[RMDB]
The record gives the reactivity of an RNA of 177 nucleotides to DMS. For DMS the reverse transcriptase was MarathonRT.
RNA sequence: GGGAACGACUCGAGUAGAGUCGAAAAAGAAAGAGAUCGCAGCUGCGAAAGAGGACGCGUAGGAUCCGAAAUACUCGAAGCAGCUAACCGGAUAACGGAAGGAUCCAUCCCAAAGCGAUCAAAAAAACGCUAAUUGUAGGUUCGCCUACAAUUAGCGAAAAGAAACAACAACAACAAC
Reactivity to DMS in 0.01 (KOAc 150mM, MgCl2 10mM, bicine 150mM(pH8.5), 24C), signal-to-noise 1, nucleotides 027 to 126: a050g000a050a110a190g000a140g000a010u040c000g040c010a100g030c000u000g040c000g000a080a070a190g000a000g000g070a110c200g010c110g000u000a180g050g020a020u000c110c000g000a000a060a110u000a120c010u010c040g000a080a200g000c040a010g000c010u000a110a040c060c040g000g000a060u040a110a200c040g010g010a040a050g000g000a050u020c000c010a160u000c050c000c040a060a030a140g040c010g040a000u010c000a000a000a050a120a050a050a090